[RMDB]
RNA sequence: GGGAACGACUCGAGUAGAGUCGAAAAAUGGUGACCUUCGGGUCACCAUGGUCCGUAGCUGCGUUAAUUUAAUAGCUACGCUUAAUAAAUUUAAUUAACGCAAUGGAGCCUGCUUCGGCAGGCUCAAGCAGUUAUAUUUCUUCGGAAAUAUAACUGCAAAAGAAACAACAACAACAAC
Reactivity to 2A3 in 0.01 (KOAc 150mM, MgCl2 10mM, bicine 150mM(pH8.5), 24C), signal-to-noise 2, nucleotides 027 to 126: a000u000g000g000u010g000a010c020c000u000u050c280g070g000g000u000c000a000c000c000a000u010g010g020u080c010c010g050u080a050g060c070u040g010c010g020u010u000a010a020u050u010u080a100a070u050a050g020c060u110a100c130g010c020u140u190a180a070u180a250a300a030u110u060u060a020a000u000u010a000a000c000g000c010a030a080u100g080g020a000g010c000c000u010g000c000u030u030c110g040g000c000a000g000g000c000u010c000a000a000
Reactivity to DMS in 0.01 (KOAc 150mM, MgCl2 10mM, bicine 150mM(pH8.5), 24C), signal-to-noise 2, nucleotides 027 to 126: a010u000g020g020u010g000a020c000c010u000u030c140g040g010g000u000c000a000c020c000a000u000g010g000u000c020c000g010u010a080g020c140u000g010c000g010u000u000a000a000u000u000u000a080a060u020a090g000c050u020a030c150g000c110u020u010a050a070u000a050a070a100u010u010u000a030a020u000u010a010a010c000g020c030a090a100u010g000g020a000g010c000c000u000g010c000u000u010c280g020g010c000a000g000g000c000u000c000a010a060